[RMDB]
RNA sequence: GGGAACGACUCGAGUAGAGUCGAAAAAGGAAAAUGGCCUCUGAAUCUUAUACAACCAUACCCUUCUAUUCAUUCAAACCGUAUGAUGCAAGAUAUGAAGACUCCAGUAGUAGUGUUAUAAGCUAUGGAGUUAUUGAGAGUUACAAUGUCCUAAUAGUCUAAUAUUUCCUUUCGAGGAAAUAUUAGAAAAAGAAACAACAACAACAAC
Reactivity to DMS in 0.01 (KOAc 150mM, MgCl2 10mM, bicine 150mM(pH8.5), 24C), signal-to-noise 3, nucleotides 027 to 156: a090g010g010a050a060a110a110u010g020g020c030c020u010c050u000g010a110a100u000c030u000u000a120u000a110c040a090a050c020c010a050u010a050c040c020c010u000u000c030u000a110u000u010c060a130u000u000c060a050a020a100c060c040g010u000a040u000g020a050u000g030c070a060a070g010a090u000a090u000g000a090a260g000a040c000u000c000c000a090g030u000a060g030u000a060g040u030g030u000u000a150u000a110a230g000c010u000a050u000g020g020a040g020u010u000a030u000u000g000a090g020a130g000u000u000a060c050a050a110u000g020u000c020c020u000a060a120u010a150g030
Reactivity to 2A3 in 0.01 (KOAc 150mM, MgCl2 10mM, bicine 150mM(pH8.5), 24C), signal-to-noise 4, nucleotides 027 to 156: a000g060g000a040a050a020a060u030g030g010c010c020u000c030u040g050a080a050u030c030u090u140a090u020a180c040a030a040c040c000a030u040a050c010c040c000u040u020c040u110a140u090u070c040a050u090u060c050a080a050a140c040c020g010u040a030u070g050a030u060g050c050a080a010g010a080u040a020u150g070a040a080g020a020c010u010c020c050a010g030u040a000g000u010a010g050u070g060u210u300a220u070a260a040g000c000u000a030u020g010g000a010g000u010u010a010u030u030g020a020g000a000g000u020u020a030c040a070a050u070g030u030c000c010u080a100a180u170a140g030
Annotation
This 207-nucleotide RNA was probed chemically with DMS and 2A3. The 2A3 profile rests on 3,105 reads. 2A3 adducts were read by reverse transcription with SuperScript II with manganese. DMS adducts were read by reverse transcription with MarathonRT.